[RMDB]
RNA sequence: GGGAACGACUCGAGUAGAGUCGAAAAAGAGCUGUCGGAUCGCACGCACAUGAUAGUACAUAUCUAGUAUACUAGUAGACUAGGAUCCAUAGCACUAGGCGAGUACGUACCUAGGUACUCAUGAUACUAUACUGAUUUUAUUCGUAAAAUCAGUAUAAAAAGAAACAACAACAACAAC
Reactivity to 2A3 in 0.01 (KOAc 150mM, MgCl2 10mM, bicine 150mM(pH8.5), 24C), signal-to-noise 9, nucleotides 027 to 126: a000g080a020g000c020u030g030u090c110g030g000a020u020c020g020c110a050c070g110c020a050c030a130u130g050a080u090a060g060u090a080c050a120u120a040u090c030u020a030g030u050a060u020a190c030u020a020g070u030a040g060a100c020u020a030g080g040a020u000c010c010a020u030a010g010c010a020c040u050a030g120g050c040g040a010g010u020a020c020g020u030a040c010c010u010a030g030g020u000a010c010u010c010a020u100g030a010u030a060c060
Reactivity to DMS in 0.01 (KOAc 150mM, MgCl2 10mM, bicine 150mM(pH8.5), 24C), signal-to-noise 9, nucleotides 027 to 126: a060g010a090g020c020u000g020u000c100g040g000a040u000c030g020c120a070c160g010c090a090c100a090u010g010a090u000a060g010u010a070c110a100u000a070u010c040u000a060g010u000a070u000a170c040u000a050g010u000a070g010a070c020u000a030g000g000a050u000c040c020a080u000a020g010c040a090c030u000a070g010g010c130g000a040g000u000a010c020g020u000a200c050c030u000a070g010g010u000a010c010u000c020a100u010g010a130u020a070c180

The record gives the reactivity of an RNA of 177 nucleotides to 2A3 and DMS.
It was measured as part of the RMDB library OK2TRN.
The 2A3 profile rests on 32,686 reads.
For DMS, 36,081 sequencing reads were counted.
Conditions: 150 mM KOAc, 10 mM MgCl2 and 150 mM bicine (pH 8.5), 24 C.
DMS (dimethyl sulfate) methylates the pairing face of unpaired adenines and cytosines.
For 2A3 the reverse transcriptase was SuperScript II with manganese.